[RMDB]
RNA sequence: GGGAACGACUCGAGUAGAGUCGAAAAUACCUUGAGUAUUGGUGAAUUCAGUUUAGCGUGCAUGCUCUUGGCUAUUCUCAUAGUGAUUGUCAAAUUUGGAGUUACUUAUUCGUCAAUUCAAUAUUUAAAAAGGUGCCGAUGUUCGCAUCGGCACCAACGAUAGCACUGGGUUCGCCCAGUGCUAUCGAAAAGAAACAACAACAACAAC
Reactivity to 2A3 in 0.01 (KOAc 150mM, MgCl2 10mM, bicine 150mM(pH8.5), 24C), signal-to-noise 2, nucleotides 027 to 156: u050a020c010c010u040u040g030a040g020u050a030u050u060g040g000u060g020a080a050u120u060c060a110g060u060u090u170a090g050c100g070u070g040c020a060u090g010c020u000c000u120u030g010g070c030u030a040u100u000c090u010c030a080u090a050g140u120g050a040u020u040g020u020c040a090a150a110u080u100u090g030g000a090g040u030u030a050c020u060u050a020u050u030c010g020u000c020a000a010u000u020c010a050a080u080a220u190u180u230a140a140a080a040a080g000g000u000g000c000c000g000a000u010g070u030u090c110g010c110a000u000c000g000g030c000a000c000c000a000a010